[RMDB]
RNA sequence: GGGAACGACUCGAGUAGAGUCGAAAAGCGUACUACUCGUACGCGAGGAUUCCAAUGAUGUAGGGAGAACAACAUCCCAAAUAGGAUGUUGACCCUAUUGAGGAAUCCUCACGAGUAUCGCAAAACCCAUCACUCCUGUUCGCAGGAGUGAUGGGAACCUCCGUAGAUAGUUCGCUAUCUACGGAGGAAAAGAAACAACAACAACAAC
Reactivity to DMS in 0.01 (KOAc 150mM, MgCl2 10mM, bicine 150mM(pH8.5), 24C), signal-to-noise 1, nucleotides 027 to 156: g010c060g000u010a090c060u000a040c060u000c020g010u000a150c190g080c110g030a020g070g010a010u010u020c000c000a090a130u000g020a100u000g010u000a030g000g000g010a110g000a170a160c060a040a020c010a020u010c000c000c020a020a220a240u010a070g020g010a010u000g010u000u000g010a090c030c010c000u000a000u000u000g010a070g010g030a040a020u020c020c000u000c010a030c000g050a040g010u000a010u000c000g050c030a070a070a150a120c000c010c000a000u010c000a000c000u000c000c000u010g040u000u000c300g070c070a060g000g000a060g030u010g000a000u000g000g000g010a010a010
Reactivity to 2A3 in 0.01 (KOAc 150mM, MgCl2 10mM, bicine 150mM(pH8.5), 24C), signal-to-noise 4, nucleotides 027 to 156: g010c010g050u090a140c040u000a000c000u020c010g050u090a090c150g040c080g250a000g000g000a000u000u000c000c010a030a300u150g050a030u060g030u010a000g030g030g020a180g070a150a040c010a000a000c010a050u020c000c010c040a110a210a100u220a110g000g000a000u000g020u030u080g110a240c000c000c000u020a000u000u010g010a010g000g000a000a010u020c010c000u000c000a000c000g000a000g000u020a020u300c010g000c000a000a000a100a100c000c000c000a010u000c000a010c000u020c000c000u030g080u130u080c250g030c150a000g000g000a000g000u010g000a000u000g000g000g000a000a010
An RNA of 207 nucleotides, treated with DMS and 2A3 and read out base by base. For DMS, 2,564 sequencing reads were counted. In probing experiments dimethyl sulfate is read out at A N1 and C N3, which are open when not base-paired. The data come from the RNA Mapping Database (RMDB), library RNAMAK. For DMS the reverse transcriptase was MarathonRT.